Overview: Chemical mapping of a 177-nucleotide RNA with 2A3 and DMS. Source: RMDB library OK1LIB, as collected in RNAgym. The RNA was probed in 150 mM KOAc, 10 mM MgCl2 and 150 mM bicine (pH 8.5) at 24 C. Reactivities are given for positions 27 through 126. The DMS profile rests on 3,697 reads.
RNA sequence: GGGAACGACUCGAGUAGAGUCGAAAAGACAGUGGAAGAUGCCAUGACACCCAAAGCACUGAACAGCAAAAUGUUUGCUGUCAUUGAAGGCGUGCGAGAAGAUCUCCAACCUCCAUCUCAAAGAGGAGAACACUGUAGCUUUCGAGCUACAGUGUUCAAAAGAAACAACAACAACAAC
Reactivity to 2A3 in 0.01 (KOAc 150mM, MgCl2 10mM, bicine 150mM(pH8.5), 24C), signal-to-noise 9, nucleotides 027 to 126: g100a010c080a020g030u030g040g020a060a050g040a060u110g070c030c000a040u090g020a080c010a070c020c020c000a060a080a010g080c030a010c040u050g030a120a020c000a010g010c000a010a020a060a120u300g210u100u060u010g000c000u000g000u020c000a040u020u160g090a100a030g050g010c100g010u030g020c030g020a060g030a080a020g010a040u010c010u000c010c010a040a100c010c000u000c010c020a120u060c040u020c150a100a160a010g050a010g070g020a060
Reactivity to DMS in 0.01 (KOAc 150mM, MgCl2 10mM, bicine 150mM(pH8.5), 24C), signal-to-noise 3, nucleotides 027 to 126: g000a110c110a070g000u030g000g010a040a060g020a070u020g020c040c010a040u040g010a100c070a090c020c000c020a060a140a150g030c000a010c070u010g000a040a020c050a000g030c000a010a010a240a230u060g040u020u020u000g010c010u010g000u000c010a040u020u010g010a080a130g010g010c080g000u000g010c060g030a060g030a050a110g010a090u000c010u000c000c050a100a160c040c020u010c010c030a110u000c060u000c090a050a110a070g000a070g020g010a120